[RMDB]
RNA sequence: GGGAACGACUCGAGUAGAGUCGAAAAAAGCGAAAAGUCGACCCCAAGCUGAAAAGCGAAGGGUCGAGUUGUUGAAAAAUGACCUGAGAGCAUGAGGCGAGACCCGUAGCGCAGGGCAAAACUUCCAGAAUUACUGCAAUUUCGAUUGCAGUAAUUCAAAAGAAACAACAACAACAAC
Reactivity to 2A3 in 0.01 (KOAc 150mM, MgCl2 10mM, bicine 150mM(pH8.5), 24C), signal-to-noise 4, nucleotides 027 to 126: a000a000g230c150g100a140a110a010a040g160u010c000g000a000c000c000c000c020a000a000g000c000u050g040a010a020a070a040g010c000g020a030a020g000g000g000u000c000g000a000g000u000u000g000u000u010g120a050a020a010a050a100u100g030a050c000c000u050g020a080g000a030g070c030a050u090g040a050g040g020c050g040a060g030a270c010c010c000g030u030a000g000c000g000c010a010g000g000g000c020a020a050a030a050c050u060u030c020c030a030
Reactivity to DMS in 0.01 (KOAc 150mM, MgCl2 10mM, bicine 150mM(pH8.5), 24C), signal-to-noise 4, nucleotides 027 to 126: a110a070g040c140g040a070a090a070a130g020u010c010g010a010c000c010c000c000a010a300g010c000u010g000a090a080a140a010g020c010g000a300a140g000g020g060u010c000g000a030g050u000u000g000u000u000g000a020a030a040a090a100u000g010a070c010c000u010g000a030g020a120g010c010a030u020g020a110g000g010c020g020a090g010a190c000c010c020g020u030a090g010c050g020c000a030g000g010g000c050a020a010a070a050c080u010u000c080c100a210

The record gives the reactivity of an RNA of 177 nucleotides to 2A3 and DMS.